[RMDB]
RNA sequence: GGGAACGACUCGAGUAGAGUCGAAAACGGCAUGGAGAGCAGCGAAGACUGAUAGGAGGAGAUGGAACCUCGCUGUGAGCGACGUUUGUCCCAGUCACGUACGGCCGUCGCAAGUUUCGAGCCUCGCCUCAGGCUAAAACUUCGGUUUUAGCCUGAGAAAAGAAACAACAACAACAAC
Reactivity to DMS in 0.01 (KOAc 150mM, MgCl2 10mM, bicine 150mM(pH8.5), 24C), signal-to-noise 3, nucleotides 027 to 126: c090g000g010c070a100u020g000g000a130g000a210g030c010a050g010c020g040a060a060g000a170c080u010g010a090u000a120g010g000a070g000g010a080g000a070u010g010g000a100a100c070c050u000c030g040c020u010g010u010g000a140g010c030g020a040c070g020u010u000u010g000u000c030c010c030a070g000u010c080a060c180g010u000a080c090g000g000c070c020g020u000c040g020c050a090a080g020u000u010u000c020g020a100g010c010c010u000c080g000c190
Reactivity to 2A3 in 0.01 (KOAc 150mM, MgCl2 10mM, bicine 150mM(pH8.5), 24C), signal-to-noise 2, nucleotides 027 to 126: c010g020g040c000a020u100g060g000a080g000a020g100c050a000g000c020g050a080a020g040a090c100u130g080a100u160a060g000g100a040g040g020a100g020a050u140g060g040a080a070c010c010u040c020g020c010u050g010u100g070a010g030c020g020a040c020g030u030u100u120g030u050c000c030c000a010g060u040c100a030c110g050u130a000c030g000g050c050c000g000u010c020g000c050a050a060g020u030u060u020c030g010a010g040c010c000u040c030g050c020